An RNA of 177 nucleotides, treated with DMS and read out base by base.
The RNA was probed in 150 mM KOAc, 10 mM MgCl2 and 150 mM bicine (pH 8.5) at 24 C.
Values are in units of 0.01, from 0 to 300, in steps of 10.
[RMDB]
RNA sequence: GGGAACGACUCGAGUAGAGUCGAAAACGAGCUUUCCUCCUCCUUCACCGGGAGCCGGAAAACCCGGAGCGAACCAGCCCAGCACGGCAGCGCAUGCUCAGUAGCGAGCAGGUUCAGUUCGCUAGUACCGUGGCUAUACAUUCGUGUAUAGCCACGGAAAAGAAACAACAACAACAAC
Reactivity to DMS in 0.01 (KOAc 150mM, MgCl2 10mM, bicine 150mM(pH8.5), 24C), signal-to-noise 2, nucleotides 027 to 126: c030g000a070g000c080u000u000u010c000c020u020c240c000u000c000c000u000u000c150a140c140c180g000g000g020a040g020c020c070g020g010a070a040a050a090c030c010c020g000g000a160g010c010g000a010a060c000c020a160g000c020c060c080a120g030c030a100c050g000g010c100a040g000c090g010c140a070u000g000c020u000c000a130g000u000a050g010c030g010a010g030c000a100g000g030u000u000c090a080g000u000u000c010g010c020u000a070g000u000a170